An RNA of 177 nucleotides, treated with 2A3 and DMS and read out base by base. The RNA was probed in 150 mM KOAc, 10 mM MgCl2 and 150 mM bicine (pH 8.5) at 24 C. For DMS the reverse transcriptase was MarathonRT. For 2A3, 2,992 sequencing reads were counted.
RNA sequence: GGGAACGACUCGAGUAGAGUCGAAAACGCAACGCUUUUCGAGCUAGUGAAACAUUCAAGGAAUACGAGAAGGCCAUUGCUGGUAAUUUGAGUACUAAUGCCAAGAUAGCUCUUGCAAUUGGGGCUGGAUCUUAGGCUAGUUCGCUAGCCUAAGAUCAAAAGAAACAACAACAACAAC
Reactivity to 2A3 in 0.01 (KOAc 150mM, MgCl2 10mM, bicine 150mM(pH8.5), 24C), signal-to-noise 3, nucleotides 027 to 126: c010g040c020a020a030c030g010c040u040u100u130u110c040g030a020g020c030u060a040g030u040g090a100a000a000c040a060u090u100c040a060a050g100g030a160a020u090a090c010g010a000g030a100a030g050g000c010c010a070u050u100g060c070u050g000g080u070a110a160u030u020u110g060a040g020u030a060c020u060a050a080u100g050c020c010a020a020g020a100u100a030g030c010u010c040u030u050g060c030a130a160u120u060g020g000g010g000c000u040g060
Reactivity to DMS in 0.01 (KOAc 150mM, MgCl2 10mM, bicine 150mM(pH8.5), 24C), signal-to-noise 4, nucleotides 027 to 126: c120g000c090a040a070c270g000c050u000u010u010u000c060g040a100g010c020u000a060g040u000g000a090a080a110c050a090u000u000c050a110a080g020g000a190a080u000a070c070g010a150g000a030a050g010g010c040c070a070u000u010g000c100u000g030g010u000a050a080u000u010u000g000a150g020u000a050c050u000a040a090u000g020c050c050a040a080g010a090u000a050g010c020u000c000u000u000g010c130a090a140u030u000g010g010g020g010c060u000g000